[RMDB]
RNA sequence: GGGAACGACUCGAGUAGAGUCGAAAAUAGCUAGUUCGCUAGCUAACGGGAGCGUACUACUAGCGUGAGUAGGCUGAUGACCGUUUGCUAUCCCAAAUAGGAUAGCGACGCAAGGCCUACCCGCUAGUAUCGCCAAGACGAGGGUUUCGACCCUCAAGUAUAAGAAGUAGUUCGCUACUUCUUAUACAAAAGAAACAACAACAACAAC
Reactivity to 2A3 in 0.01 (KOAc 150mM, MgCl2 10mM, bicine 150mM(pH8.5), 24C), signal-to-noise 9, nucleotides 027 to 156: u080a000g010c010u000a010g040u100u040c240g040c150u000a000g000c010u010a060a050c070g110g080g040a250g030c010g030u120a100c060u010a000c000u000a040g000c010g060u140g060a130g010u010a000g000g010c010u040g020a230u150g040a100c050c030g010u030u030u250g000c000u000a000u010c010c020c040a190a270a120u300a050g000g000a000u000a000g000c000g000a000c000g000c040a060a160g010g000c000c000u000a000c000c010c000g010c000u000a000g000u000a000u020c000g010c000c010a030a020g080a020c140g010a010g020g020g020u060u180u210c230g110a110c000c000c000u000c000a000a020
Reactivity to DMS in 0.01 (KOAc 150mM, MgCl2 10mM, bicine 150mM(pH8.5), 24C), signal-to-noise 4, nucleotides 027 to 156: u000a020g020c010u000a010g020u000u010c280g050c030u010a050g000c000u000a030a100c090g010g000g010a130g030c000g010u000a100c200u000a020c010u010a010g000c010g020u010g010a170g040u000a010g010g030c000u000g010a140u000g000a110c300c010g000u000u000u020g070c010u000a000u000c000c000c020a060a200a230u010a050g010g000a000u000a000g010c000g010a010c000g010c010a080a260g010g020c000c000u000a000c000c000c000g000c000u000a010g000u000a010u000c010g000c000c020a080a140g020a170c190g000a010g000g010g000u000u000u020c060g000a050c010c000c000u010c000a010a090
The record gives the reactivity of an RNA of 207 nucleotides to 2A3 and DMS. DMS adducts were read by reverse transcription with MarathonRT. The RNA was probed in 150 mM KOAc, 10 mM MgCl2 and 150 mM bicine (pH 8.5) at 24 C. For 2A3, 15,745 sequencing reads were counted. For DMS, 13,513 sequencing reads were counted. It was measured as part of the RMDB library RNAMAK. Reactivities are given for positions 27 through 156.